[RMDB]
RNA sequence: GGGAACGACUCGAGUAGAGUCGAAAAACAACGCUCCAGAAGAAAAAGAACGUGGUAUCACAAUCAAUACUUCUCACAUUGAGUACCAAACUGACAAACGUCACUACGCUCACGUUGACUGCCCAGGACCAGGGUGCUAAUUCGUUAGCACCCUGGUAAAAGAAACAACAACAACAAC
Reactivity to DMS in 0.01 (KOAc 150mM, MgCl2 10mM, bicine 150mM(pH8.5), 24C), signal-to-noise 2, nucleotides 027 to 126: a120c060a070a050c180g000c000u000c080c130a070g020a060a130g010a080a140a080a080a030g030a030a020c210g020u000g000g000u000a080u020c060a060c050a080a190u000c050a010a050u000a020c060u000u000c010u000c190a050c210a060u020u030g030a040g030u000a050c080c000a000a050a150c120u040g000a030c040a050a040a000c200g000u020c020a000c050u000a080c040g010c010u010c020a030c030g000u050u050g000a110c020u030g020c000c000c050a090g020g000
Reactivity to 2A3 in 0.01 (KOAc 150mM, MgCl2 10mM, bicine 150mM(pH8.5), 24C), signal-to-noise 5, nucleotides 027 to 126: a000c020a020a010c010g020c010u060c050c030a040g070a150a000g030a020a180a030a010a020g040a050a010c040g050u040g000g090u160a080u260c060a030c030a080a070u040c010a040a040u030a140c050u050u020c040u020c040a100c000a100u050u110g020a010g020u060a080c080c030a070a090a050c050u060g020a040c020a070a200a020c100g010u020c000a010c060u080a010c070g000c020u010c040a030c040g000u010u020g040a080c040u080g020c010c000c000a020g030g080

Notes: An RNA of 177 nucleotides, treated with DMS and 2A3 and read out base by base. For DMS the reverse transcriptase was MarathonRT. For DMS, 1,747 sequencing reads were counted.